[RMDB]
Structure probing data (DMS and 2A3) for a 177-nucleotide construct. Source: RMDB library OK1LIB, as collected in RNAgym. Conditions: 150 mM KOAc, 10 mM MgCl2 and 150 mM bicine (pH 8.5), 24 C. DMS adducts were read by reverse transcription with MarathonRT. 2A3 adducts were read by reverse transcription with SuperScript II with manganese.
RNA sequence: GGGAACGACUCGAGUAGAGUCGAAAAGAGGACGAACUGCCCGACGGGCGCACGGUGGCCCAAGUGACGGUCGGUCAGGCCGAGUUCGCCGACCUUCUGGUGCUGACCCACCCGGAACCGGUCGCCGCAAGCAAUGUGGAUUCGUCCACAUUGCUUGAAAAGAAACAACAACAACAAC
Reactivity to DMS in 0.01 (KOAc 150mM, MgCl2 10mM, bicine 150mM(pH8.5), 24C), signal-to-noise 5, nucleotides 027 to 126: g020a070g000g010a060c050g020a060a070c120u030g010c020c000c020g000a100c160g000g010g000c050g000c140a190c010g010g000u000g000g020c010c010c020a130a110g010u020g000a170c050g000g010u010c300g000g000u000c010a020g020g000c000c030g000a040g000u010u020c050g010c070c110g000a070c110c060u000u010c030u030g020g000u020g010c020u010g000a040c020c030c030a140c130c000c020g000g000a130a030c020c050g000g000u000c000g010c020c040g020
Reactivity to 2A3 in 0.01 (KOAc 150mM, MgCl2 10mM, bicine 150mM(pH8.5), 24C), signal-to-noise 7, nucleotides 027 to 126: g120a020g030g050a020c060g040a130a070c060u110g020c000c010c010g060a090c100g020g000g030c040g000c040a040c040g010g020u010g000g020c010c000c020a060a000g020u030g030a010c000g000g000u020c010g010g000u010c020a010g000g000c010c020g020a020g010u070u100c110g070c190c040g040a080c010c000u110u110c080u160g030g010u200g300c010u010g010a020c010c000c000a020c010c050c010g020g000a010a010c000c000g000g000u000c010g000c010c000g030